The record gives the reactivity of an RNA of 177 nucleotides to 2A3 and DMS. DMS adducts were read by reverse transcription with MarathonRT.
RNA sequence: GGGAACGACUCGAGUAGAGUCGAAAAUUCGAGAUAUGUUUUGUAGGAUUGUCGUCCUAUUUACGUGUUUAAGCCUGGGGAGAGGUGUAAUAGCGAGAACCAGGUGUAGGCAUUAUGAGCUGGUCGUAUCCGAGUACGAAUUCGUUCGUACUCGGAUAAAAGAAACAACAACAACAAC
Reactivity to 2A3 in 0.01 (KOAc 150mM, MgCl2 10mM, bicine 150mM(pH8.5), 24C), signal-to-noise 3, nucleotides 027 to 126: u060u060c040g020a000g030a080u100a030u200g130u010u140u090u110g030u030a040g080g030a100u040u130g110u160c140g020u010c000c000u000a020u000u110u070a080c040g000u020g000u010u070u040a040a000g000c000c000u000g020g000g000g010a190g010a100g110g050u060g080u150a110a130u090a080g080c090g080a150g010a060a000c010c000a000g000g040u020g030u000a000g000g000c000a000u080u100a100u300g070a020g040c030u000g000g070u080c060g020u030
Reactivity to DMS in 0.01 (KOAc 150mM, MgCl2 10mM, bicine 150mM(pH8.5), 24C), signal-to-noise 2, nucleotides 027 to 126: u000u000c080g010a090g020a050u020a010u000g010u000u020u000u010g010u040a070g030g010a070u020u010g050u020c150g000u010c030c060u000a010u000u010u010a080c100g010u020g000u000u000u000a050a280g000c000c000u000g010g010g020g000a170g010a040g000g000u000g000u000a060a040u030a160g000c100g010a060g020a300a220c020c010a010g000g000u000g000u000a120g010g010c000a030u000u000a070u000g010a130g010c020u010g000g010u040c090g030u000